This 177-nucleotide RNA was probed chemically with 2A3. The data come from the RNA Mapping Database (RMDB), library OK1LIB. Reactivities are given for positions 27 through 126. 2A3 adducts were read by reverse transcription with SuperScript II with manganese.

[RMDB]
RNA sequence: GGGAACGACUCGAGUAGAGUCGAAAACGGUGGUGGCCGGCACGCCGGUCAUCGAGUCGCCGACGGCCCGCGUCACGACCUCCUUGCCGGCCACGGUGACCCGGACCAGCACCGCCUUCAGAUGCGCGUCACUACCACGCUUCGGCGUGGUAGUGACAAAAGAAACAACAACAACAAC
Reactivity to 2A3 in 0.01 (KOAc 150mM, MgCl2 10mM, bicine 150mM(pH8.5), 24C), signal-to-noise 2, nucleotides 027 to 126: c020g020g000u080g060g100u000g000g020c010c000g000g060c040a030c020g090c000c020g030g080u160c010a000u040c000g000a030g000u020c030g040c060c170g000a030c000g100g000c000c080c060g170c000g000u000c030a040c020g000a070c050c040u000c030c000u000u030g000c000c000g000g000c000c010a030c010g010g040u050g010a090c010c000c050g020g010a140c010c000a000g080c000a000c020c000g080c000c000u060u060c040a070g030a200u100g090c050g010c030